The record gives the reactivity of an RNA of 207 nucleotides to 2A3.

RNA sequence: GGGAACGACUCGAGUAGAGUCGAAAACCUGGAGAGGUCUUCUGCCCUAGCUCGGUCUUCGAAGCUUCCUUUGGCUACUACCCGGUGGAAACAACUGAAGCUUCAACGCCUUUUUUUCCAAUCUUCUUUAGCACCGGGCUAGGGAGUAAGCCCGUGGGACUGUGCAUAGGUUCGCCUAUGCACAGUCAAAAGAAACAACAACAACAAC
Reactivity to 2A3 in 0.01 (KOAc 150mM, MgCl2 10mM, bicine 150mM(pH8.5), 24C), signal-to-noise 2, nucleotides 027 to 156: c010c000u050g080g080a100g040a080g020g000u080c030u080u000c020u150g300c000c000c000u000a000g060c000u010c000g000g020u020c080u220u140c280g020a000a010g010c010u020u040c010c030u020u050u000g050g010c010u010a000c000u080a090c010c030c040g010g020u040g000g070a170a230a050c000a010a010c010u030g000a010a010g000c000u020u040c030a070a040c060g150c000c020u080u090u070u050u040u280u160c130c040a170a160u110c040u290u100c060u040u300u050a020g000c050a010c000c000g000g000g000c000u000a000g000g000g000a000g000u010a000a000g000c000c000c000g000u120g060g090